[RMDB]
RNA sequence: GGGAACGACUCGAGUAGAGUCGAAAACAAUGACAGAUUAGUUCCUAAAUAGCAGGAGAAAAUGAAAUGUUCUAUUGGCUGAACACACAGUGCUCUGUAAAAUCAGAGAAAUCAAUAUUGUCCCCAAAAUGAACUAAUUUGAAAGUCUCAAAGAUGAGGCAUUUACGGUAUUCGUACCGUAAAUGCCAAAAGAAACAACAACAACAAC
Reactivity to 2A3 in 0.01 (KOAc 150mM, MgCl2 10mM, bicine 150mM(pH8.5), 24C), signal-to-noise 1, nucleotides 027 to 156: c020a000a060u090g170a060c060a080g000a030u140u070a020g030u000u000c000c020u060a060a110a130u000a030g110c090a050g040g020a050g030a020a080a000a080u120g050a040a180a000u090g000u000u030c030u030a080u170u120g240g040c120u050g110a160a000c000a000c030a000c000a090g050u030g110c000u020c000u000g000u030a050a050a050a030u220c000a000g000a000g020a090a000a000u060c000a020a000u020a080u280u020g050u130c050c000c020c000a050a050a050a050u000g000a000a030c030u030a120a110u000u130u180g080a050a080a050g000u020c000u000c000a140a250a000g150a160u300g000a140